[RMDB]
RNA sequence: GGGAACGACUCGAGUAGAGUCGAAAAUAUUAAUAAGCGGAGGAAAAGAAACUAACAAGGAUUCCCCUAGUAACGGCGAGUGAAGCGGGAAGAGCUCAAGCUUAAAAUCUCCGUGCAAGUUUUGCGCCCUUAGGCUACCAUUCGUGGUAGCCUAAGGAAAAGAAACAACAACAACAAC
Reactivity to DMS in 0.01 (KOAc 150mM, MgCl2 10mM, bicine 150mM(pH8.5), 24C), signal-to-noise 2, nucleotides 027 to 126: u000a130u090u050a130a110u070a070a300g030c020g000g000a020g000g000a060a040a140a140g010a000a040a080c090u010a030a120c300a060a040g030g000a080u000u000c000c000c010c020u000a110g000u000a160a030c000g000g110c200g010a170g000u000g000a080a130g020c300g000g000g000a010a000g000a140g000c040u000c150a050a040g000c010u000u000a020a120a130a080u060c000u000c000c000g000u000g000c090a090a050g000u020u020u060u030g000c300g000c190
Reactivity to 2A3 in 0.01 (KOAc 150mM, MgCl2 10mM, bicine 150mM(pH8.5), 24C), signal-to-noise 2, nucleotides 027 to 126: u040a040u100u300a080a160u140a170a000g020c020g030g000a030g030g060a080a140a010a000g110a160a110a000c060u110a060a010c020a050a020g010g010a100u000u000c000c000c010c000u000a000g000u000a020a000c000g060g050c180g000a010g010u010g030a050a000g190c000g020g040g000a000a030g000a000g040c010u050c110a080a010g010c030u070u070a010a000a000a010u030c000u010c000c020g040u060g020c080a110a140g000u000u000u150u110g000c060g050c000